[RMDB]
RNA sequence: GGGAACGACUCGAGUAGAGUCGAAAAGAGCCAUCAGCCGCGGCGGCAAGCCCCCCUCGACCAUGGCCAAGCUGGUGACUGGCAUGGGCUUUACGAUCCACGGAGCGCUCACCCCAGGAUCGGAGGGAACCUCUUUCACGUUCGCGUGAAAGAGGUUAAAAGAAACAACAACAACAAC
Reactivity to DMS in 0.01 (KOAc 150mM, MgCl2 10mM, bicine 150mM(pH8.5), 24C), signal-to-noise 2, nucleotides 027 to 126: g000a180g000c040c020a080u020c080a080g010c010c000g010c040g060g000c010g040g020c100a060a060g000c030c020c030c070c010c010u020c050g000a120c050c010a050u010g000g030c010c000a050a060g010c040u000g020g030u000g000a250c050u010g000g000c020a070u010g000g000g000c040u030u000u050a130c050g010a070u000c010c020a130c200g000g010a100g000c100g000c020u030c040a130c120c010c000c040a100g030g000a080u000c000g010g020a040g000g000g010
Reactivity to 2A3 in 0.01 (KOAc 150mM, MgCl2 10mM, bicine 150mM(pH8.5), 24C), signal-to-noise 3, nucleotides 027 to 126: g010a010g010c010c010a050u050c000a040g100c000c040g030c070g020g010c000g040g000c050a050a060g000c000c000c000c000c000c000u000c010g060a060c020c000a030u080g170g120c010c010a080a020g000c040u100g050g060u050g090a150c010u020g000g000c000a020u030g020g030g000c000u120u070u110a050c060g030a060u000c030c000a020c120g010g010a090g030c090g020c020u050c020a110c010c010c000c000a020g010g070a050u050c010g010g020a060g020g030g000